[RMDB]
RNA sequence: GGGAACGACUCGAGUAGAGUCGAAAACGCUGGGUCCAUGGUAGCCCGAUCUGUAUUGUCAGAAGGUACUGAAGCGCGCACGGUAUGCUUCUUGGAUUUAUACAGAUCGGGCGAACAUGGACCUGUGCUGAAGCGCGCACGGCAACCGAAAGGUGCGGAUCAUAAUUUACUUCGGUAAAUUAUGAUCAAAAGAAACAACAACAACAAC
Reactivity to DMS in 0.01 (KOAc 150mM, MgCl2 10mM, bicine 150mM(pH8.5), 24C), signal-to-noise 1, nucleotides 027 to 156: c110g020c060u000g000g000g030u000c010c010a000u000g000g020u000a110g020c000c000c010g020a010u010c000u000g020u000a020u000u000g020u000c060a080g010a040a020g000g020u000a030c000u000g010a050a110g010c060g050c030g050c030a300c030g010g020u000a030u010g020c000u000u000c010u050u020g050g020a100u000u000u000a050u010a070c020a010g020a030u000c010g000g000g020c020g000a000a010c010a020u000g020g010a000c020c010u000g010u000g000c130u010g010a230a060g010c050g030c040g000c030a190c010g010g040c080a120a290c080c040g000a140a040a190g040g010u010g000c020g000
Reactivity to 2A3 in 0.01 (KOAc 150mM, MgCl2 10mM, bicine 150mM(pH8.5), 24C), signal-to-noise 2, nucleotides 027 to 156: c030g000c020u020g020g010g020u000c020c000a010u010g000g100u180a010g000c030c000c010g000a000u000c000u000g080u030a180u240u110g030u030c030a000g010a040a000g030g000u030a010c010u050g050a170a080g030c040g000c020g000c080a030c020g030g000u000a010u090g300c020u000u020c010u010u110g060g000a030u010u300u240a150u060a010c000a010g000a010u000c000g010g000g000c030g000a000a000c000a000u060g000g000a010c000c010u000g000u000g000c010u030g020a040a050g010c000g000c010g000c020a010c010g040g000c000a040a060c010c010g050a060a040a020g070g010u030g000c020g050
The data come from the RNA Mapping Database (RMDB), library RNAMAK. An RNA of 207 nucleotides, treated with DMS and 2A3 and read out base by base. For 2A3 the reverse transcriptase was SuperScript II with manganese. 2A3 is a SHAPE reagent: it acylates the 2'-hydroxyl of flexible nucleotides of all four kinds. The DMS profile rests on 3,414 reads.